The record gives the reactivity of an RNA of 177 nucleotides to 2A3 and DMS. The reactions ran in a buffer of 150 mM KOAc, 10 mM MgCl2 and 150 mM bicine (pH 8.5), at 24 C.
[RMDB]
RNA sequence: GGGAACGACUCGAGUAGAGUCGAAAACUUGAAUCUAAGAUUACUUGACAAAUGAUAAUAUAAUACACUGGAGCUUUAAACAUAGCCAAUGUGAUUCUAACUCCUUUAAACUCACAGUUAAUCAUAACUAUUCCUAAAUCUUCGGAUUUAGGAAUAGAAAAGAAACAACAACAACAAC
Reactivity to 2A3 in 0.01 (KOAc 150mM, MgCl2 10mM, bicine 150mM(pH8.5), 24C), signal-to-noise 6, nucleotides 027 to 126: c020u040u100g060a020a020u060c040u110a090a060g030a120u070u070a080c020u060u100g080a050c030a090a130a080u060g050a020u040a260a010u110a060u050a160a110u170a060c030a010c040u050g050g010a120g060c020u080u080u200a040a160a030c090a070u100a030g080c030c010a020a080u100g010u040g030a050u050u000c010u040a020a080c040u070c030c000u040u080u110a130a130a040c020u030c040a120c010a060g040u060u110a020a040u000c030a020u040a230a030
Reactivity to DMS in 0.01 (KOAc 150mM, MgCl2 10mM, bicine 150mM(pH8.5), 24C), signal-to-noise 3, nucleotides 027 to 126: c130u040u000g010a060a180u000c050u050a090a090g020a040u020u000a030c000u020u030g010a060c120a070a040a080u000g000a100u010a090a100u030a070u020a050a050u020a080c050a040c000u010g000g000a050g010c090u000u050u040a040a050a020c100a080u010a030g030c120c100a030a070u050g000u000g020a080u000u000c070u020a040a110c050u000c010c030u000u010u030a010a080a090c290u010c010a040c160a010g000u020u010a020a020u000c010a040u030a060a150